[RMDB]
The record gives the reactivity of an RNA of 207 nucleotides to 2A3. 2A3 adducts were read by reverse transcription with SuperScript II with manganese. Reactivities are given for positions 27 through 156.

RNA sequence: GGGAACGACUCGAGUAGAGUCGAAAAGAAAAAAUCUCCAACCGUCUCGUCAAAGUCGGCAACAAAGGCAUACGUUACGACUACGUCAAUUUUGAUGAUUUCGACGUACGCGCAUACGACGUUUUGAUCGAUAGUUAUUUCGUCUUUGACUAUUAUAGCCCUAAGCUGAAUUCGUUCAGCUUAGGGCAAAAGAAACAACAACAACAAC
Reactivity to 2A3 in 0.01 (KOAc 150mM, MgCl2 10mM, bicine 150mM(pH8.5), 24C), signal-to-noise 2, nucleotides 027 to 156: g100a020a220a000a000a010a010u080c100u000c040c030a030a050c050c020g140u070c030u080c090g070u030c000a000a000a000g000u010c010g000g030c020a010a010c030a010a080a040g030g000c010a000u040a010c000g010u020u010a030c070g110a150c020u000a010c020g010u000c000a020a020u010u120u160u280g170a230u140g080a070u030u040u110c100g000a000c010g000u000a080c070g050c010g000c050a030u080a300c060g000a010c040g000u020u010u210u240g120a200u060c000g020a010u050a090g030u040u060a080u170u140u060c000g030u000c000u000u030u040g000a000c020u030a030u300u040a090u180a020